[RMDB]
RNA sequence: GGGAACGACUCGAGUAGAGUCGAAAACUAGAUGCUGAAGGCCCUCCUUUGAGCACUCUAGAUUUUGGAAGGAAAGUGGGGUUGGAGAUGCGAUGCAUAGGAAACAAAGGCUUUCCGGGCCUUAUGCUAAAUUCACCACUUUCGAGUGGUGAAUUUAAAAAGAAACAACAACAACAAC
Reactivity to DMS in 0.01 (KOAc 150mM, MgCl2 10mM, bicine 150mM(pH8.5), 24C), signal-to-noise 4, nucleotides 027 to 126: c000u000a000g010a050u000g000c010u010g000a030a030g000g000c210c160c300u020c020c010u000u010u000g010a000g030c010a030c220u000c000u000a010g000a140u010u000u000u000g020g000a080a090g010g000a050a050a060g020u000g000g010g010g010u000u010g000g010a120g010a080u000g020c070g000a060u000g020c050a050u000a080g000g000a110a050a090c120a070a070a070g000g000c070u000u000u010c060c060g010g010g010c020c010u010u000a030u000g000c130